[RMDB]
RNA sequence: GGGAACGACUCGAGUAGAGUCGAAAAUGGGAUCCUCCGGCCCCACCACCACCGUACAGGUUGUCCGGAACAGCCAGGGUGGCGCCGACCUCAGCAUUCGGCCCUCCCCCUGCUCGGGCGGCUGGCACCCGCUAAAUAGGUUCGCCUAUUUAGCGGGAAAAGAAACAACAACAACAAC
Reactivity to 2A3 in 0.01 (KOAc 150mM, MgCl2 10mM, bicine 150mM(pH8.5), 24C), signal-to-noise 2, nucleotides 027 to 126: u080g000g000g040a030u060c030c040u040c060c020g070g010c000c010c010c000a020c020c000a020c020c010a050c010c040g110u150a100c050a040g030g020u060u020g010u000c000c010g050g040a050a040c020a010g050c070c040a010g010g000g020u030g010g010c080g010c010c000g030a050c010c050u130c070a050g020c040a120u080u040c000g020g020c000c000c000u040c000c000c000c000c000u020g010c010u030c030g000g000g030c020g010g000c000u020g020g000c020a040
Reactivity to DMS in 0.01 (KOAc 150mM, MgCl2 10mM, bicine 150mM(pH8.5), 24C), signal-to-noise 5, nucleotides 027 to 126: u000g010g010g000a110u000c040c020u010c090c050g020g000c090c010c020c030a080c060c040a130c070c020a070c050c080g010u000a090c130a120g010g000u010u000g010u000c020c020g020g010a090a080c040a030g000c040c210a110g000g000g010u000g010g010c230g010c000c010g000a030c110c050u010c150a090g020c200a170u010u000c040g010g000c010c020c000u000c010c010c000c070c010u000g010c020u000c050g020g010g010c020g010g010c030u000g000g010c130a180
The data come from the RNA Mapping Database (RMDB), library OK2TST. Structure probing data (2A3 and DMS) for a 177-nucleotide construct. 2A3 adducts were read by reverse transcription with SuperScript II with manganese. For DMS, 4,904 sequencing reads were counted. The 2A3 profile rests on 4,144 reads. The reactions ran in a buffer of 150 mM KOAc, 10 mM MgCl2 and 150 mM bicine (pH 8.5), at 24 C.